Structure probing data (2A3 and DMS) for a 177-nucleotide construct. Reactivities are given for positions 27 through 126. For DMS the reverse transcriptase was MarathonRT. For DMS, 1,943 sequencing reads were counted.

[RMDB]
RNA sequence: GGGAACGACUCGAGUAGAGUCGAAAACAGCAUGCAUUUAUGAAACAUAAGGGCGGUGAUUCAACUGACUUCAUAGCCCUCAUUAUGGCUUAUGGCAAUUGCACAUUUGGUGCUCCAGAUGAUGCCUCACUAUUACUGUCUUCGGACAGUAAUAGUGAAAAGAAACAACAACAACAAC
Reactivity to 2A3 in 0.01 (KOAc 150mM, MgCl2 10mM, bicine 150mM(pH8.5), 24C), signal-to-noise 6, nucleotides 027 to 126: c030a010g030c030a030u070g000c030a040u030u060u130a120u150g080a110a050a050c020a020u040a040a020g000g000g000c020g000g030u010g010a020u010u040c040a190a200c170u180g040a030c020u030u000c020a000u020a020g000c000c000c000u000c010a020u040u080a020u040g030g010c010u060u050a030u100g060g000c020a050a150u110u100g000c010a010c010a050u050u070u070g080g000u110g060c060u020c000c000a010g000a050u030g010a040u050g020c000c000u010
Reactivity to DMS in 0.01 (KOAc 150mM, MgCl2 10mM, bicine 150mM(pH8.5), 24C), signal-to-noise 3, nucleotides 027 to 126: c140a110g030c060a070u000g020c030a040u000u000u010a050u010g010a060a060a120c120a040u000a040a060g000g020g020c030g000g060u000g000a030u010u000c050a270a140c280u020g000a050c170u000u000c010a030u020a200g030c000c010c010u000c190a090u010u010a060u020g020g000c090u020u000a070u010g000g010c090a040a100u000u000g040c030a100c030a060u000u000u010g010g020u010g010c200u000c040c010a020g000a040u000g020a080u010g020c010c140u010